Chemical mapping of a 177-nucleotide RNA with DMS and 2A3. The data come from the RNA Mapping Database (RMDB), libraries RFM100 and RFMREP. The reactions ran in a buffer of 150 mM KOAc, 10 mM MgCl2 and 150 mM bicine (pH 8.5), at 24 C.
RNA sequence: GGGAACGACUCGAGUAGAGUCGAAAAAUCUUCACGGUAACGCCCGUGCCGAUCUCAAAUCCCGCUUUUCUCAGCCAUUUGGCGCUGAUUUUGAUCACCGGCGUGUCGCUGCGGUUGGGCAGAUAACAGAUAGGGAGAUAUUCGUAUCUCCCUAUCUAAAAGAAACAACAACAACAAC
Reactivity to DMS in 0.01 (KOAc 150mM, MgCl2 10mM, bicine 150mM(pH8.5), 24C), signal-to-noise 9, nucleotides 027 to 126: a040u010c020u010u000c030a060c040g000g010u010a100a120c210g010c130c010c010g010u010g010c080c070g010a030u000c050u010c120a070a110a130u010c010c030c020g010c130u010u010u010u010c080u010c030a090g000c030c040a210u020u020u020g010g010c050g010c050u000g010a050u010u010u020u010g010a080u010c050a080c070c030g000g000c030g010u000g010u000c060g000c030u000g010c080g010g020u000u000g000g000g010c050a050g000a090u020a080a110c200
Reactivity to 2A3 in 0.01 (KOAc 150mM, MgCl2 10mM, bicine 150mM(pH8.5), 24C), signal-to-noise 9, nucleotides 027 to 126: a000u030c030u050u040c010a000c020g030g010u090a210a040c090g040c030c000c000g000u010g000c010c020g040a060u020c040u030c090a100a100a070u040c010c020c010g030c020u100u080u110u020c050u010c030a020g010c010c010a170u140u120u250g100g010c050g000c030u020g050a100u040u040u100u150g120a080u070c020a020c070c010g030g000c030g020u060g050u060c040g010c050u030g010c030g030g000u040u020g030g020g000c020a030g020a120u100a090a080c040